[RMDB]
RNA sequence: GGGAACGACUCGAGUAGAGUCGAAAAGGACAGUCGGCCAGACUUGAAAUCAAGUACACACCAGUCGAAGAUCCGAAUCUCAGAAUUGCGUGGCUCCUCAAUGGAAAGGGUAUUUUGGCCUCUUCCAGUUGAGUCGAAAGUUCGCUUUCGACUCAACAAAAGAAACAACAACAACAAC
Reactivity to DMS in 0.01 (KOAc 150mM, MgCl2 10mM, bicine 150mM(pH8.5), 24C), signal-to-noise 2, nucleotides 027 to 126: g010g000a100c140a090g040u000c030g010g030c090c130a190g000a030c000u000u000g000a130a110a180u000c080a030a040g010u000a110c070a090c110a060c180c090a110g020u010c050g040a050a110g000a080u000c010c030g010a100a110u010c000u010c050a110g010a030a090u000u000g020c100g020u000g000g010c030u000c040c020u000c020a060a150u000g000g000a030a040a020g000g000g010u000a120u000u000u010u010g020g010c000c000u000c080u000u000c000c000a110
Reactivity to 2A3 in 0.01 (KOAc 150mM, MgCl2 10mM, bicine 150mM(pH8.5), 24C), signal-to-noise 1, nucleotides 027 to 126: g060g020a000c040a080g140u040c020g030g000c040c010a000g020a060c020u000u020g020a160a130a090u230c020a040a040g040u090a020c090a010c040a040c090c080a040g030u060c000g030a060a010g020a100u030c050c040g100a050a160u040c070u000c020a040g070a100a060u160u010g030c060g000u020g010g000c000u000c010c000u000c030a040a090u030g000g010a060a000a080g060g050g000u040a130u160u200u200u240g100g000c000c020u060c000u060u000c000c020a030